[RMDB]
RNA sequence: GGGAACGACUCGAGUAGAGUCGAAAACUGGUGGGGAAGCUAUCGCUGCCUAAUAAGCACUUUAGUUAAACCAUCACUGUGUACUGGCCAAUAAACCCAGUAUCCCGUUCGACCGAGCCCGCUUAUCGGUAUCGAAUCAACGGUCAUAAGAGAUAAGGCCUAAACGUAAGUUCGCUUACGUUUAGGCAAAAGAAACAACAACAACAAC
Reactivity to DMS in 0.01 (KOAc 150mM, MgCl2 10mM, bicine 150mM(pH8.5), 24C), signal-to-noise 2, nucleotides 027 to 156: c130u010g040g040u010g010g040g020g010a300a080g010c000u010a030u000c020g010c070u010g010c000c030u010a180a140u000a050a080g000c010a060c000u000u010u000a000g030u010u000a050a220a270c010c000a030u000c000a040c060u020g010u010g050u000a020c010u000g010g060c030c030a150a110u010a050a080a140c070c000c020a050g010u000a070u000c030c000c020g000u010u000c020g000a110c020c000g000a110g000c060c020c050g040c120u010u000a050u000c010g000g010u000a070u000c080g000a090a100u000c050a070a050c050g030g000u010c010a160u000a050a080g000a130g020a060u000a070a130g000
Reactivity to 2A3 in 0.01 (KOAc 150mM, MgCl2 10mM, bicine 150mM(pH8.5), 24C), signal-to-noise 7, nucleotides 027 to 156: c050u030g000g000u000g000g010g000g010a080a020g010c000u000a010u010c000g140c250u020g000c010c000u080a130a040u300a160a000g000c000a010c000u010u010u000a030g050u070u040a090a010a010c010c000a000u000c010a020c060u160g010u000g010u050a010c010u000g010g000c020c060a190a220u200a210a080a030c010c000c000a000g010u010a040u050c020c000c000g020u030u020c020g000a010c000c000g000a000g080c050c040c060g030c170u110u100a080u130c020g000g050u050a140u020c020g010a010a030u080c040a060a090c040g000g060u090c060a110u130a220a050g040a010g020a070u070a160a030g060